[RMDB]
Conditions: 150 mM KOAc, 10 mM MgCl2 and 150 mM bicine (pH 8.5), 24 C.
Structure probing data (2A3 and DMS) for a 177-nucleotide construct.
Values cover nucleotides 27 to 126.

RNA sequence: GGGAACGACUCGAGUAGAGUCGAAAAGAAGCUUUCCCUUGGACUUGGCUGCGCGGAUGCCUGCCUUUGUUCGUUCGGAAAUGAGCGCGCGUUCGAGCUGCGCCACGGCUCCGAGAACCUGGAGGGACAUGCUGACCCAUUUCGAUGGGUCAGCAUGAAAAGAAACAACAACAACAAC
Reactivity to 2A3 in 0.01 (KOAc 150mM, MgCl2 10mM, bicine 150mM(pH8.5), 24C), signal-to-noise 3, nucleotides 027 to 126: g090a060a030g070c070u020u060u060c000c000c000u010u060g020g010a010c030u040u020g010g010c020u050g020c090g030c040g260g080a070u240g010c010c000u010g000c000c020u050u050u120g030u000u020c060g000u030u030c000g040g050a040a080a090u150g010a090g050c030g020c020g000c020g060u150u140c080g030a070g010c040u080g000c140g000c000c000a040c010g050g000c010u010c000c000g010a010g010a040a030c040c050u060g090g040a010g020g000g020a020
Reactivity to DMS in 0.01 (KOAc 150mM, MgCl2 10mM, bicine 150mM(pH8.5), 24C), signal-to-noise 2, nucleotides 027 to 126: g030a050a060g010c070u020u000u010c000c000c020u000u010g000g010a030c030u010u000g000g040c010u000g020c120g040c000g020g110a100u050g040c060c010u000g000c090c030u010u000u070g000u010u000c000g010u070u000c010g000g010a060a160a300u020g000a210g000c000g000c030g010c020g000u010u040c070g010a300g000c040u060g000c000g030c030c010a030c110g000g060c190u010c000c000g000a030g000a070a090c020c080u010g010g000a030g000g000g000a240